[RMDB]
Chemical mapping of a 177-nucleotide RNA with DMS.
RNA sequence: GGGAACGACUCGAGUAGAGUCGAAAAAUCUGAUAGUUGACUGAGGAAAACUCCAAGGCGGAUAAGUGAAGAGUGAGAACAGUUAUAGACAAAACUUAUCAGAAUGGACUGGGGUCAAAAUAGGACAUGUUCCUAUGUGGUUCGCCACAUAGGAACAAAAAGAAACAACAACAACAAC
Reactivity to DMS in 0.01 (KOAc 150mM, MgCl2 10mM, bicine 150mM(pH8.5), 24C), signal-to-noise 1, nucleotides 027 to 126: a170u000c020u000g010a040u010a070g000u000u010g000a070c000u000g000a190g010g010a130a000a050a140c180u000c020c010a060a070g010g000c210g000g000a010u000a100a150g040u000g020a220a070g000a070g000u000g020a090g060a110a260c080a020g030u000u000a180u020a120g010a100c250a080a010a000a030c010u010u000a000u000c020a000g010a130a090u000g000g040a040c080u020g000g020g020g010u000c080a060a010a050a040u000a090g000g000a030c090a100

Record summary: The data come from the RNA Mapping Database (RMDB), library OK2TRN. DMS adducts were read by reverse transcription with MarathonRT. Conditions: 150 mM KOAc, 10 mM MgCl2 and 150 mM bicine (pH 8.5), 24 C. Values cover nucleotides 27 to 126.